[RMDB]
RNA sequence: GGGAACGACUCGAGUAGAGUCGAAAAGUUCUCGCGCCGUUAAAGUGGGGGGAACGGGUCAGGCCGGUGACGGAGCAGCCCACCUUGCGCACGUUCCCGUUGCAGAAGCACACCGAGGAGCAUCUCAGGACUUUGCGCCCCAAGUGUCGUCGCGAGGCACCUUCAAGAUGUUCGCAUCUUGAAGGUGAAAAGAAACAACAACAACAAC
Reactivity to 2A3 in 0.01 (KOAc 150mM, MgCl2 10mM, bicine 150mM(pH8.5), 24C), signal-to-noise 2, nucleotides 027 to 156: g020u070u010c000u000c000g000c000g000c000c010g030u050u140a150a030a040g060u090g000g000g010g000g000g000a030a050c020g030g000g020u130c040a030g000g030c020c100g000g040u070g010a050c050g000g010a070g020c010a070g010c020c000c000a020c000c010u060u210g010c060g000c030a030c030g020u030u080c000c000c020g000u050u100g010c010a010g040a210a030g020c040a030c010a030c010c040g040a060g010g040a130g060c030a140u010c050u000c070a030g000g040a110c020u080u080u100g020c040g060c010c000c000c020a030a040g040u060g000u130c010g000u010c000g000c000g000a000g010g000
Reactivity to DMS in 0.01 (KOAc 150mM, MgCl2 10mM, bicine 150mM(pH8.5), 24C), signal-to-noise 1, nucleotides 027 to 156: g040u000u000c000u000c010g020c020g030c020c050g030u000u000a050a060a130g000u010g050g000g000g000g020g090a050a060c030g010g000g000u020c030a110g020g030c020c090g010g040u020g000a300c040g060g000a110g000c040a230g000c030c000c020a060c000c000u000u000g010c080g000c050a190c030g020u020u000c020c000c000g030u000u000g030c050a170g010a130a190g000c090a060c060a080c090c010g000a160g020g020a270g060c110a070u000c040u010c100a220g020g000a080c060u000u000u000g000c000g040c000c010c010c060a060a280g000u010g010u000c030g010u000c000g010c020g040a090g050g020
Conditions: 150 mM KOAc, 10 mM MgCl2 and 150 mM bicine (pH 8.5), 24 C. The record gives the reactivity of an RNA of 207 nucleotides to 2A3 and DMS. DMS (dimethyl sulfate) methylates the pairing face of unpaired adenines and cytosines. It was measured as part of the RMDB library ARCHII. The DMS profile rests on 2,114 reads. For DMS the reverse transcriptase was MarathonRT.